Description: This 177-nucleotide RNA was probed chemically with DMS and 2A3.
RNA sequence: GGGAACGACUCGAGUAGAGUCGAAAACGAGUUGGAGACCACGCAGAGUCACGAAUGCCUAUGGCCCAAGGGGUACACGCUGGAUCUGACAUCACAUGAUGAUGAAAAAUUGUUCAUGCCACCCAAACGAGGUAUAUGCGUUCGCGCAUAUACCUCGAAAAGAAACAACAACAACAAC
Reactivity to DMS in 0.01 (KOAc 150mM, MgCl2 10mM, bicine 150mM(pH8.5), 24C), signal-to-noise 2, nucleotides 027 to 126: c130g000a040g050u030u000g000g000a110g000a150c010c070a110c220g000c070a090g030a110g010u010c050a070c070g000a100a030u020g000c000c080u020a110u010g000g000c000c030c050a150a150g000g020g010g020u000a050c090a070c160g020c010u000g000g000a160u000c050u000g000a190c030a020u000c040a060c050a040u040g000a110u010g000a000u000g000a010a070a010a140a100u000u000g070u000u010c100a020u020g010c050c040a140c010c020c070a000a090a220
Reactivity to 2A3 in 0.01 (KOAc 150mM, MgCl2 10mM, bicine 150mM(pH8.5), 24C), signal-to-noise 2, nucleotides 027 to 126: c020g020a010g020u040u020g090g040a090g070a150c020c030a020c040g000c030a020g020a020g100u040c010a020c130g050a110a030u040g000c030c010u110a110u150g050g000c040c010c000a010a070g060g000g020g000u060a020c030a020c050g000c020u000g020g010a030u050c010u010g040a020c010a040u030c000a000c010a140u130g030a120u010g000a000u060g050a030a040a010a120a070u070u010g020u030u030c020a040u080g000c020c010a050c010c000c000a050a070a000

For 2A3, 1,836 sequencing reads were counted.
Source: RMDB library OK2TRN, as collected in RNAgym.
For DMS the reverse transcriptase was MarathonRT.